[RMDB]
RNA sequence: GGGAACGACUCGAGUAGAGUCGAAAACUUCACCUCCUGUCUCUUUGCCAGUCAACUUCACAAUAAAGCCUUUAUUUUCCCCAAACCGGUGCCAUAGUAUUGGCUUCUAUGCGAAUCAGGUGGGAAGGUUCAUCCACUGAUUCGUCAGUGGAUGAACAAAAGAAACAACAACAACAAC
Reactivity to DMS in 0.01 (KOAc 150mM, MgCl2 10mM, bicine 150mM(pH8.5), 24C), signal-to-noise 2, nucleotides 027 to 126: c070u000u000c050a150c060c010u010c020c040u020g010u000c060u000c050u010u000u000g010c030c080a070g000u020c030a060a120c040u000u000c040a090c080a070a120u000a090a080a100g010c020c030u000u000u000a150u000u010u000u000c020c010c000c180a020a070a070c110c050g010g020u000g000c030c010a020u010a070g010u000a040u010u010g010g010c060u010u000c040u000a050u000g010c070g000a020a030u010c040a070g030g000u000g000g000g010a100a090g010
Reactivity to 2A3 in 0.01 (KOAc 150mM, MgCl2 10mM, bicine 150mM(pH8.5), 24C), signal-to-noise 2, nucleotides 027 to 126: c020u090u050c050a170c090c010u000c000c000u080g010u010c000u010c010u120u110u050g070c030c040a030g020u050c000a030a060c040u090u100c020a060c040a100a100u070a130a070a010g020c000c000u070u110u050a130u080u120u130u160c020c000c000c040a010a050a030c030c020g050g030u030g050c000c000a030u050a040g080u040a110u060u050g060g070c000u030u000c010u020a030u020g040c010g050a030a030u080c000a020g000g060u040g000g010g000a020a040g140